[RMDB]
RNA sequence: GGGAACGACUCGAGUAGAGUCGAAAAGCACGUACGCUUCGAAAGCAGAGAUGUUCUCGAAGAUGGAGAGCGCGACGACAAGGUCUUGGAAGUCGACAUGCCUCGGUUCGAAGAGGACCACCUUGUCAGGACGCAGGUCCACCACCGCACGGUACCAGAAUCCUUGACAUUUCGAUGUCAAGGAUUCAAAAGAAACAACAACAACAAC
Reactivity to 2A3 in 0.01 (KOAc 150mM, MgCl2 10mM, bicine 150mM(pH8.5), 24C), signal-to-noise 4, nucleotides 027 to 156: g060c050a020c090g040u150a030c020g000c010u010u000c020g010a040a020a020g000c010a000g020a010g020a100u020g020u050u000c020u000c010g000a010a010g010a050u120g030g020a050g000a010g030c020g000c000g040a110c060g000a000c020a010a010g010g020u030c060u140u140g020g040a090a080g090u160c080g080a070c050a100u170g050c020c000u040c040g040g030u100u150c090g060a090a040g030a050g050g000a020c000c010a010c010c000u000u000g000u030c030a010g020g020a020c020g010c050a040g000g170u000c020c010a030c040c010a060c020c080g040c020a050c060g000g010u040a050c010c020a000
Reactivity to DMS in 0.01 (KOAc 150mM, MgCl2 10mM, bicine 150mM(pH8.5), 24C), signal-to-noise 2, nucleotides 027 to 156: g050c010a040c060g010u000a000c090g000c050u030u000c020g000a050a000a000g010c010a030g030a300g020a250u000g020u000u000c020u000c020g000a050a060g010a100u000g030g010a060g010a300g010c000g060c010g010a140c000g020a080c020a020a040g010g010u010c030u000u000g120g020a130a130g010u000c050g000a110c090a090u000g020c020c000u010c070g040g020u000u000c050g020a190a230g030a260g010g010a120c020c060a080c030c000u030u090g000u010c050a100g000g000a060c030g000c060a070g030g020u000c020c040a070c010c060a200c020c000g030c010a130c060g030g030u000a060c040c030a230